Structure probing data (2A3 and DMS) for a 177-nucleotide construct. 2A3 adducts were read by reverse transcription with SuperScript II with manganese. The data come from the RNA Mapping Database (RMDB), library OK2TRN. The 2A3 profile rests on 1,401 reads. The RNA was probed in 150 mM KOAc, 10 mM MgCl2 and 150 mM bicine (pH 8.5) at 24 C. Reactivities are given for positions 27 through 126.
RNA sequence: GGGAACGACUCGAGUAGAGUCGAAAAUAGGGGUGGGGCAGUUGCUUAUUCUGCGUCCUGGCCUGUGGUGCUCAGCCCCAGAGACUCACACCACAGGACUUGAGGCUGGCAAAACAAGACCAAGGUGCUUAGCUUAUGCGUUCGCGCAUAAGCUAAGAAAAGAAACAACAACAACAAC
Reactivity to 2A3 in 0.01 (KOAc 150mM, MgCl2 10mM, bicine 150mM(pH8.5), 24C), signal-to-noise 1, nucleotides 027 to 126: u150a030g000g000g020g050u060g030g020g040g000c010a020g030u120u040g070c040u090u110a070u180u110c020u100g050c010g040u040c000c010u000g040g040c010c000u000g010u010g000g000u020g000c020u010c010a050g040c040c000c000c000a000g000a000g000a010c080u020c220a020c030a000c010c000a000c000a000g000g000a010c020u050u050g070a040g050g000c050u040g000g000c020a010a050a060a080c040a090a010g050a040c050c000a030a030g040g030u100g040
Reactivity to DMS in 0.01 (KOAc 150mM, MgCl2 10mM, bicine 150mM(pH8.5), 24C), signal-to-noise 2, nucleotides 027 to 126: u000a110g010g020g010g020u000g010g000g020g040c070a060g020u000u000g030c050u000u000a090u010u010c080u010g000c030g000u010c040c060u000g020g010c010c000u000g020u000g010g010u000g000c050u000c050a090g010c020c000c000c130a150g000a070g010a100c050u000c200a300c000a010c000c000a010c030a020g000g010a030c010u000u000g000a070g000g020c090u000g010g020c040a060a040a040a080c140a040a080g010a120c060c030a050a090g030g010u010g020